Chemical mapping of a 177-nucleotide RNA with DMS and 2A3.
Values cover nucleotides 27 to 126.
Conditions: 150 mM KOAc, 10 mM MgCl2 and 150 mM bicine (pH 8.5), 24 C.
DMS (dimethyl sulfate) methylates the pairing face of unpaired adenines and cytosines.
The DMS profile rests on 5,308 reads.
The 2A3 profile rests on 8,148 reads.
It was measured as part of the RMDB library TTRDES.
RNA sequence: GGGAACGACUCGAGUAGAGUCGAAAAGAUAUGGAAUCUAUAAUCCUGAACUACAGGGAUGUAUCGGAAACGAUACAAUCCUGCAGGGUAGAUUCCUAAGUCAAAGGUAAAGGUUCGCCUUUACCAACUUAAAUUUGAUGUUCGCAUCAAAUUUAAGAAAAGAAACAACAACAACAAC
Reactivity to DMS in 0.01 (KOAc 150mM, MgCl2 10mM, bicine 150mM(pH8.5), 24C), signal-to-noise 4, nucleotides 027 to 126: g000a050u000a300u000g000g000a020a000u000c000u000a030u000a180a090u010c000c000u000g000a090a070c090u010a300c040a020g010g010g010a070u000g010u000a000u000c000g000g000a110a080a230c020g010a020u010a000c000a020a040u000c000c000u000g020c010a020g000g010g010u000a000g000a020u010u000c000c000u010a020a110g000u010c050a070a140a130g010g020u000a010a010a020g000g020u000u010c300g020c010c000u000u000u010a000c000c010a080a070
Reactivity to 2A3 in 0.01 (KOAc 150mM, MgCl2 10mM, bicine 150mM(pH8.5), 24C), signal-to-noise 2, nucleotides 027 to 126: g000a010u070a020u130g000g000a010a010u000c010u000a060u060a260a300u210c010c000u040g050a100a120c140u260a120c300a030g000g010g030a020u030g010u000a010u000c000g000g000a060a030a030c010g000a010u000a000c000a020a080u020c000c000u010g040c060a010g000g000g010u010a010g000a010u000u000c000c010u010a090a010g040u010c050a130a110a120g000g000u000a020a010a010g040g050u050u180c300g200c040c000u010u000u010a010c000c000a000a000